Chemical mapping of a 177-nucleotide RNA with 2A3 and DMS. It was measured as part of the RMDB library OK1LIB. DMS adducts were read by reverse transcription with MarathonRT. Conditions: 150 mM KOAc, 10 mM MgCl2 and 150 mM bicine (pH 8.5), 24 C.
RNA sequence: GGGAACGACUCGAGUAGAGUCGAAAAUGGUGUUAAGUGGAAUAAGUGGAAAAAUAUACAUAUAUGUACAGGGGGCUACAUAUAUGUAUAUGCCCCCUACGUUCAGUAUAAGUAGGUAUAAGGUGGAAUAUCGGUAUUUAUUCGUAAAUACCGAUAUAAAAGAAACAACAACAACAAC
Reactivity to 2A3 in 0.01 (KOAc 150mM, MgCl2 10mM, bicine 150mM(pH8.5), 24C), signal-to-noise 7, nucleotides 027 to 126: u080g020g020u050g030u120u100a120a100g040u070g090g050a070a090u080a140a070g050u160g020g040a080a060a010a060a000u020a000u000a000c000a000u030a000u000a000u020g010u000a020c090a100g030g000g000g040g040c010u000a010c000a000u030a000u010a000u030g010u000a000u000a000u010g010c000c000c000c010c000u010a010c020g020u010u080c050a030g050u060a060u010a210a020g030u040a020g000g070u050a110u050a150a040g070g030u070g020g050a040
Reactivity to DMS in 0.01 (KOAc 150mM, MgCl2 10mM, bicine 150mM(pH8.5), 24C), signal-to-noise 8, nucleotides 027 to 126: u010g000g010u010g010u000u010a060a120g020u010g000g000a100a050u020a080a070g020u020g010g000a030a100a080a090a020u000a010u000a000c000a020u000a010u000a010u000g000u000a030c110a180g000g000g010g000g020c190u010a010c010a010u000a020u010a010u000g000u000a000u000a000u010g000c050c010c040c010c010u000a010c030g010u010u020c130a090g010u020a060u020a050a090g010u010a010g000g010u010a080u020a050a070g010g020u020g000g010a130